[RMDB]
RNA sequence: GGGAACGACUCGAGUAGAGUCGAAAAAGGUCAUACCAACAUGCCUAAUCUACUUAACACAAUGAUGGAGUUGCGCAAGUGCUGCAACCACCCAUAUCUCAUCAAUGGUGAGGGAAUGCUUGGUAUAGUAUAGUCUAGGUUUCGACCUAGACUAUACAAAAGAAACAACAACAACAAC
Reactivity to DMS in 0.01 (KOAc 150mM, MgCl2 10mM, bicine 150mM(pH8.5), 24C), signal-to-noise 9, nucleotides 027 to 126: a090g010g020u000c140a050u000a030c010c000a010a030c020a010u000g010c000c010u000a080a170u000c040u000a070c140u000u010a070a100c190a100c220a060a070u000g010a020u000g000g000a110g010u000u000g020c010g010c020a300a130g010u010g010c040u010g020c010a010a010c010c040a090c130c010c020a030u010a060u000c090u000c090a050u000c100a050a080u010g000g010u000g000a300g000g000g000a020a000u000g000c190u000u000g000g000u000a020u000a110
Reactivity to 2A3 in 0.01 (KOAc 150mM, MgCl2 10mM, bicine 150mM(pH8.5), 24C), signal-to-noise 9, nucleotides 027 to 126: a000g130g050u140c030a010u010a020c010c000a000a000c000a010u040g030c000c000u040a060a060u040c020u090a110c060u180u190a200a030c080a020c030a190a200u160g010a020u040g050g000a060g020u010u030g000c020g000c050a270a260g180u160g250c080u110g000c010a010a000c000c010a110c000c010c010a060u070a070u080c080u020c040a140u030c030a050a160u140g020g010u020g020a050g000g000g020a050a020u020g030c110u020u010g010g000u010a020u040a030